[RMDB]
RNA sequence: GGGAACGACUCGAGUAGAGUCGAAAAGGCUGUAGUCAGUUUGUACUGGCUCCAUAUGUGUCUAACUCAUUAGAUUGGAGUUUGCGGAUUUGCUUUACUAAUAUAUCUAGUCCACAGGCAAUCACGGGAUCUAAAGUUCAUUCGUGAACUUUAGAUCAAAAGAAACAACAACAACAAC
Reactivity to 2A3 in 0.01 (KOAc 150mM, MgCl2 10mM, bicine 150mM(pH8.5), 24C), signal-to-noise 4, nucleotides 027 to 126: g050g000c050u050g030u070a010g000u020c020a010g000u000u280u300g120u180a040c020u010g010g030c000u030c010c000a110u150a110u200g150u030g000u020c020u020a050a040c020u000c060a090u110u150a080g160a250u090u160g060g000a060g030u020u040u100g070c030g010g030a020u060u010u160g010c000u050u070u010a040c030u080a090a160u170a050u030a030u210c030u020a010g040u050c050c010a050c040a060g040g000c000a000a030u050c050a010c200g090g090
Reactivity to DMS in 0.01 (KOAc 150mM, MgCl2 10mM, bicine 150mM(pH8.5), 24C), signal-to-noise 7, nucleotides 027 to 126: g020g000c070u010g000u000a030g010u000c010a020g010u000u010u010g030u010a080c030u010g010g000c010u010c040c030a060u000a090u010g020u000g010u010c020u020a060a130c070u000c050a110u010u010a080g000a120u000u000g010g010a110g000u000u010u000g020c050g010g000a060u010u000u000g010c060u010u000u000a130c110u010a060a090u010a140u010a070u010c070u010a040g000u010c110c070a050c140a040g000g010c040a050a030u010c070a090c200g010g000
The data come from the RNA Mapping Database (RMDB), library OK2TST. Chemical mapping of a 177-nucleotide RNA with 2A3 and DMS. The reactions ran in a buffer of 150 mM KOAc, 10 mM MgCl2 and 150 mM bicine (pH 8.5), at 24 C. Values cover nucleotides 27 to 126. 2A3 adducts were read by reverse transcription with SuperScript II with manganese. The 2A3 profile rests on 3,628 reads. For DMS the reverse transcriptase was MarathonRT.